[RMDB]
This 207-nucleotide RNA was probed chemically with 2A3. The RNA was probed in 150 mM KOAc, 10 mM MgCl2 and 150 mM bicine (pH 8.5) at 24 C. It was measured as part of the RMDB library OK3TST. Reactivities are rounded to 0.1 and cut off at 0 and 3. The 2A3 profile rests on 737 reads.
RNA sequence: GGGAACGACUCGAGUAGAGUCGAAAAUCAUGCAACACGAUCAGCUUUGUGGUCAUGACUUGGUGACGCGAAGAAAGUGAAACCUUCAGGAGAGAGGUCCAGCAGGCAUCUGGACAAGGCUUUCAUUUAAGUCUAGGAAAAUUCUUUGAUAAAACAACCUAGCAUCCUGAUUCGUCAGGAUGCUAGGAAAAGAAACAACAACAACAAC
Reactivity to 2A3 in 0.01 (KOAc 150mM, MgCl2 10mM, bicine 150mM(pH8.5), 24C), signal-to-noise 2, nucleotides 027 to 156: u050c000a000u060g040c040a080a060c010a020c080g080a050u070c010a040g030c080u160u140u150g060u060g070g040u050c010a030u050g080a110c070u050u070g050g000u000g010a040c000g000c030g030a030a020g040a080a060a010g040u060g040a050a030a030c030c000u070u090c020a020g090g000a000g000a000g030a020g070g000u030c000c020a050g000c000a000g100g020c030a060u050c020u020g000g020a020c010a000a000g030g000c000u010u050u150c050a090u050u080u080a000a020g000u020c070u150a050g130g020a030a050a020a100u180u080c040u120u100u070g130a140u160a060a110a010a050c070a020a000